[RMDB]
RNA sequence: GGGAACGACUCGAGUAGAGUCGAAAACUGGGUGGGCUCUGAUCCUAUCUGUAGGGCUGGCUAAGUCCUUGUUCCACUCCUUCUUGCAGUGGAUCUUGCCGCUUCUCUGAAGAUGAUUGAAAUGCCCACAGCACUUGCAGAGCAAGCAGAAAAGACACAGGCAUAAUUAGUUCGCUAAUUAUGCCUGAAAAGAAACAACAACAACAAC
Reactivity to DMS in 0.01 (KOAc 150mM, MgCl2 10mM, bicine 150mM(pH8.5), 24C), signal-to-noise 2, nucleotides 027 to 156: c030u000g020g000g040u000g000g020g000c070u000c060u000g000a120u000c000c040u000a080u000c040u010g020u000a080g030g010g010c060u010g020g010c050u000a090a140g000u000c030c050u000u000g030u000u000c020c000a060c030u010c040c110u000u010c150u000u000g040c060a070g030u050g030g020a030u010c030u000u020g030c000c010g000c010u000u010c020u020c060u020g010a050a050g010a050u010g010a140u010u000g000a090a080a100u030g010c020c010c040a060c060a050g010c040a030c040u000u010g010c000a090g010a150g030c060a060a030g000c020a160g000a060a070a050a110g010a270c080a170
Reactivity to 2A3 in 0.01 (KOAc 150mM, MgCl2 10mM, bicine 150mM(pH8.5), 24C), signal-to-noise 4, nucleotides 027 to 156: c010u050g040g070g000u020g000g040g000c000u060c150u090g030a050u020c010c010u080a220u100c010u060g110u180a020g020g020g000c080u110g060g000c080u170a040a050g050u100c040c020u070u170g050u060u020c000c000a020c030u030c020c030u180u300c070u070u170g010c070a010g000u010g000g000a010u000c010u010u050g020c010c030g030c040u300u110c020u050c000u010g030a040a030g050a110u170g010a040u020u050g010a040a060a100u150g010c010c000c010a000c000a000g000c000a010c020u030u030g000c010a020g050a010g190c010a010a040g010c010a020g160a100a160a020a000g110a000c060a000